[RMDB]
RNA sequence: GGGAACGACUCGAGUAGAGUCGAAAAAAGCUGCCAACAGAGGAAGAAACAAGACAGAGGAGCCCCCAUGACGCUGGUGAACCAUCGCGAGCUGGGAGAGGAGAGGCGAAGAUAGCAGCGGAGACCCAAACCGUACCGUUCGCGGUACGGAAAAGAAACAACAACAACAAC
Reactivity to DMS in 0.01 (KOAc 150mM, MgCl2 10mM, bicine 150mM(pH8.5), 24C), signal-to-noise 5, nucleotides 027 to 129: a030a130g010c040u030g020c030c080a130a100c000a080g030a010g010g010a050a030g020a070a090a050c110a080a050g060a080c180a080g010a000g010g010a080g000c030c050c000c000c050a080u050g010a020c080g000c040u040g020g000u000g030a050a100c090c070a040u030c040g000c120g010a110g000c090u000g010g040g070a080g010a020g040g000a000g030a020g010g030c120g010a040a050g010a130u040a100g030c000a050g020c080g010g030a100g010a110c070c030c010a030a080a110
Reactivity to 2A3 in 0.01 (KOAc 150mM, MgCl2 10mM, bicine 150mM(pH8.5), 24C), signal-to-noise 3, nucleotides 027 to 129: a010a040g040c030u030g000c000c020a080a000c030a050g050a000g070g000a030a000g020a040a050a010c060a050a050g100a020c060a040g040a030g030g010a020g010c010c020c000c000c000a050u100g010a020c040g000c050u030g000g000u060g030a040a040c000c000a020u060c030g010c020g030a010g020c040u070g020g010g020a070g030a000g000g020a030g010a010g010g010c040g000a010a000g030a050u110a010g020c010a000g030c020g020g000a030g040a040c010c000c000a030a030a000
This 170-nucleotide RNA was probed chemically with DMS and 2A3. Conditions: 150 mM KOAc, 10 mM MgCl2 and 150 mM bicine (pH 8.5), 24 C. Reactivities are rounded to 0.1 and cut off at 0 and 3.